[RMDB]
RNA sequence: GGGAACGACUCGAGUAGAGUCGAAAAGAUAUGGAGACCUUCUCUAGCGUGCAUGAUGACCACAUUCGUAACUAUGUCGGAAACGACAUAGGAUAAGAAUGUGCAAGUGUCGGGAGGUCUCCUAAGUCAAACCGUAGCCUGUUCGCAGGCUACGGAACCUAAAGAUAUGAUUCGUCAUAUCUUUAGGAAAAGAAACAACAACAACAAC
Reactivity to 2A3 in 0.01 (KOAc 150mM, MgCl2 10mM, bicine 150mM(pH8.5), 24C), signal-to-noise 9, nucleotides 027 to 156: g020a010u060a020u110g000g000a000g010a010c010c010u140u060c080u050c110u130a110g090c130g260u300g030c070a020u070g090a190u070g010a140c040c010a010c010a010u000u000c000g010u000a030a050c000u000a000u000g000u000c000g010g040a060a050a050c000g000a000c000a000u000a000g000g000a000u020a030a000g000a000a000u010g000u010g000c000a040a120g000u010g030u040c030g000g010g000a000g000g000u000c000u000c000c000u000a010a000g010u000c030a040a050a070c000c000g000u000a000g000c000c000u010g020u060u040c290g000c150a000g000g000c000u000a000c000g000g000a000a000
Reactivity to DMS in 0.01 (KOAc 150mM, MgCl2 10mM, bicine 150mM(pH8.5), 24C), signal-to-noise 3, nucleotides 027 to 156: g000a090u000a170u000g020g010a030g020a010c000c000u000u010c000u020c040u000a200g060c150g040u010g030c040a050u010g020a110u000g010a160c290c020a010c000a010u010u000c000g020u000a090a300c000u000a010u000g030u010c010g030g010a150a090a250c010g030a010c000a010u000a010g000g010a110u000a060a200g000a030a000u000g010u000g010c020a030a090g000u020g000u000c070g000g010g000a010g020g020u000c010u000c000c000u000a010a060g000u000c050a070a070a110c000c000g030u000a010g000c000c000u010g010u000u000c300g010c010a050g010g030c000u000a000c000g010g000a010a020